[RMDB]
RNA sequence: GGGAACGACUCGAGUAGAGUCGAAAAGAUAUGGAAAGUCUAAGACAGUCCCGUUUCGGAAACGAAACCGGACAAUGACGGACCUUCCUAAGUCAAAGAAUUGCCAGGGUUCGCCCUGGCAAUUCAACGGAGAGUUUAAGUUCGCUUAAACUCUCCGAAAAGAAACAACAACAACAAC
Reactivity to DMS in 0.01 (KOAc 150mM, MgCl2 10mM, bicine 150mM(pH8.5), 24C), signal-to-noise 1, nucleotides 027 to 126: g000a010u000a060u010g000g000a000a000a070g000u000c000u000a130a120g000a150c130a130g010u000c000c010c250g010u000u000u000c000g000g000a020a010a050c000g000a000a000a000c010c270g000g000a000c010a150a030u020g000a090c200g000g020a040c010c030u010u000c000c000u010a010a050g000u010c000a050a060a170g000a010a010u000u010g010c000c000a000g000g030g000u000u000c300g000c000c010c010u000g010g010c000a000a000u000u010c000a080a100
This 177-nucleotide RNA was probed chemically with DMS. The reactions ran in a buffer of 150 mM KOAc, 10 mM MgCl2 and 150 mM bicine (pH 8.5), at 24 C.